RNA sequence: GGGAACGACUCGAGUAGAGUCGAAAACAUGAGGAGCUCAUGCAGCCCUUUGUCUCCAAAGCGACAAAGGUGGACCAGCAGGUGCAGGAUGUGGCUGACAUGAUGCUGAGGAAGGGACUCUUCAUGAUCCACCCAUUUCUUUCGAGAAAUGGGUGGAAAAAGAAACAACAACAACAAC
Reactivity to 2A3 in 0.01 (KOAc 150mM, MgCl2 10mM, bicine 150mM(pH8.5), 24C), signal-to-noise 2, nucleotides 027 to 126: c010a010u010g000a010g030g010a010g000c040u010c050a050u200g030c010a130g000c010c010c000u030u000u000g030u020c020u000c040c100a240a090a010g120c050g010a000c010a000a000a000g150g040u150g010g070a070c010c000a000g020c020a010g020g100u070g070c000a000g030g080a180u210g160u180g280g090c030u010g040a100c010a000u110g150a130u070g060c010u020g010a030g060g140a040a120g030g020g150a250c010u020c000u020u020c000a000u010g050a040
Reactivity to DMS in 0.01 (KOAc 150mM, MgCl2 10mM, bicine 150mM(pH8.5), 24C), signal-to-noise 2, nucleotides 027 to 126: c030a030u000g000a060g010g010a010g020c010u000c000a030u000g030c060a300g000c180c000c010u000u010u000g000u000c010u000c070c150a120a110a120g000c150g010a030c030a000a000a030g020g000u000g020g000a190c060c020a050g010c040a060g010g060u000g000c030a020g010g020a160u000g000u010g010g010c030u000g000a160c020a000u000g010a160u000g040c000u020g000a090g020g010a160a140g000g000g000a090c020u000c010u000u000c000a010u010g010a110